[RMDB]
RNA sequence: GGGAACGACUCGAGUAGAGUCGAAAAGGCGUGGGCCAGAGGGCAGAGGCGGACUGAGACAGAGCUGGGUCACCCCCACCCCUCCCUCCUGUGGCCCUGAAGCUUUGAUGGCCCCUCUGAUCUCUGCCCGUUAGCUAGGGUUCGCCCUAGCUAACGGAAAAGAAACAACAACAACAAC
Reactivity to DMS in 0.01 (KOAc 150mM, MgCl2 10mM, bicine 150mM(pH8.5), 24C), signal-to-noise 1, nucleotides 027 to 126: g020g020c160g040u010g010g010g000c100c070a020g000a030g040g000g000c030a010g010a040g020g040c170g030g000a050c040u000g030a200g010a130c070a030g000a020g000c010u000g010g000g030u010c010a070c000c010c000c010c020a240c070c020c000c030u000c020c040c020u010c120c100u010g020u000g010g000c030c000c030u010g010a100a060g010c010u000u000u000g020a170u000g010g000c000c000c000c000u000c010u020g000a050u000c010u000c000u000g000c040

Structure probing data (DMS) for a 177-nucleotide construct. The data come from the RNA Mapping Database (RMDB), library OK2TST. Values cover nucleotides 27 to 126. Conditions: 150 mM KOAc, 10 mM MgCl2 and 150 mM bicine (pH 8.5), 24 C. The DMS profile rests on 1,527 reads.